Structure probing data (DMS and 2A3) for a 207-nucleotide construct. It was measured as part of the RMDB library OK3TST. The 2A3 profile rests on 2,824 reads. Reactivities are given for positions 27 through 156. Conditions: 150 mM KOAc, 10 mM MgCl2 and 150 mM bicine (pH 8.5), 24 C. DMS adducts were read by reverse transcription with MarathonRT.
[RMDB]
RNA sequence: GGGAACGACUCGAGUAGAGUCGAAAACUGUCCUGGAUGGAAGUACAGCCGUACUUCCGCUUCUACGGCUGUAGAAGCAUCCAGCUUGAGUAACGAUGUGAUCGUACAACUCGCGUUGUACGGAUGUAACGCGAGUUACAUCAUCACGACAGACUCACGAUGCUUCUAAGUUCGCUUAGAAGCAUCGAAAAGAAACAACAACAACAAC
Reactivity to DMS in 0.01 (KOAc 150mM, MgCl2 10mM, bicine 150mM(pH8.5), 24C), signal-to-noise 1, nucleotides 027 to 156: c030u000g030u000c110c010u030g000g030a120u000g020g010a060a110g060u000a010c000a180g030c160c050g000u010a030c060u000u010c070c220g000c100u020u010c000u000a010c000g020g010c080u010g000u000a070g010a110a080g000c050a090u000c010c000a130g000c140u000u020g000a070g050u010a040a170c130g000a120u000g030u000g010a160u000c000g030u000a020c020a020a000c020u000c190g030c200g050u000u000g000u000a300c000g020g030a050u020g010u000a010a000c020g040c300g000a300g020u000u000a000c000a000u020c000a140u010c020a060c000g020a250c070a150g000a100c010u000c040a180
Reactivity to 2A3 in 0.01 (KOAc 150mM, MgCl2 10mM, bicine 150mM(pH8.5), 24C), signal-to-noise 4, nucleotides 027 to 156: c030u030g050u140c000c000u020g020g000a010u020g010g080a090a040g070u010a000c030a040g080c070c110g000u020a020c070u150u030c040c010g020c020u100u030c030u010a020c010g200g040c180u230g000u000a020g020a090a010g000c000a010u000c000c000a010g060c070u080u100g010a010g000u040a050a050c040g040a130u070g010u020g020a010u050c100g000u040a010c040a050a000c040u040c110g060c050g040u020u000g020u040a020c030g000g060a070u150g010u040a000a000c000g020c040g040a030g040u000u000a000c000a010u050c010a000u040c000a000c020g110a060c020a020g030a000c000u000c010a010